[RMDB]
RNA sequence: GGGAACGACUCGAGUAGAGUCGAAAAGAUAUGGAGGAUUGGAGGGAGAAAGUGGGUCGGAAACGACCCAGUUUCAUCGAUCUCCACGGUCCUCCUAAGUCAAAAGUACGAUGUUCGCAUCGUACAAGAGUCAAUAACUGUUCGCAGUUAUUGACUCAAAAGAAACAACAACAACAAC
Reactivity to 2A3 in 0.01 (KOAc 150mM, MgCl2 10mM, bicine 150mM(pH8.5), 24C), signal-to-noise 3, nucleotides 027 to 126: g000a000u020a010u090g000g000a000g020g010a010u110u200g040g010a070g000g030g010a110g010a020a010a040g300u020g000g000g000u010c000g000g000a010a000a000c010g000a000c000c010c000a010g020u000u010u010c050a110u300c020g020a020u020c000u000c020c010a000c020g060g120u020c000c000u010c010c000u010a020a000g000u000c020a060a030a040a150g000u000a000c000g000a010u030g050u040u150c300g000c160a000u000c010g000u000a000c000a010a020
Reactivity to DMS in 0.01 (KOAc 150mM, MgCl2 10mM, bicine 150mM(pH8.5), 24C), signal-to-noise 3, nucleotides 027 to 126: g000a020u000a070u020g000g000a020g020g010a070u000u010g030g010a030g000g000g010a020g020a000a010a010g000u000g020g010g030u000c000g010g020a010a010a030c000g000a010c000c000c000a000g000u000u000u000c010a300u010c190g000a070u000c010u000c000c020a070c300g010g020u010c000c000u010c000c000u000a000a070g010u000c020a120a090a140a150g020u000a000c000g010a010u000g010u010u020c220g020c000a010u000c000g000u000a000c000a060a130